[RMDB]
RNA sequence: GGGAACGACUCGAGUAGAGUCGAAAACGCAAAGCUGCAGCGCGGCGCUCUGGAGGCCUUGCCCCGCGCACUGCUCUUUACAUGGCCCGACGUGAGGGCACUUCGCGGGCAGUGCUGCGGCCUCGUGCCAACGGCGAAUUUUCGAAUUCGCCGUUGGAAAAGAAACAACAACAACAAC
Reactivity to 2A3 in 0.01 (KOAc 150mM, MgCl2 10mM, bicine 150mM(pH8.5), 24C), signal-to-noise 4, nucleotides 027 to 126: c040g010c060a070a050a030g010c010u050g020c030a060g030c030g000c020g070g050c020g070c030u070c080u100g140g020a030g010g060c020c000u040u110g010c040c000c000c000g000c000g000c000a000c020u020g010c010u010c000u090u210u170a110c080a120u170g080g040c020c000c020g090a110c080g090u140g070a170g000g020g010c040a090c040u040u080c020g040c050g000g010g010c030a000g000u010g000c070u050g000c000g010g000c000c000u000c020g030u060g020
Reactivity to DMS in 0.01 (KOAc 150mM, MgCl2 10mM, bicine 150mM(pH8.5), 24C), signal-to-noise 1, nucleotides 027 to 126: c020g000c050a020a030a160g070c020u030g030c030a030g010c090g030c010g000g030c080g000c050u000c020u000g000g000a070g000g000c030c010u000u040g010c050c020c000c000g080c000g000c080a020c010u000g000c000u000c000u020u000u030a110c300a090u030g030g000c000c000c000g040a150c150g050u000g000a120g020g000g010c000a050c020u020u010c080g000c290g000g000g040c010a030g000u000g000c000u030g040c000g030g000c030c010u010c240g010u000g000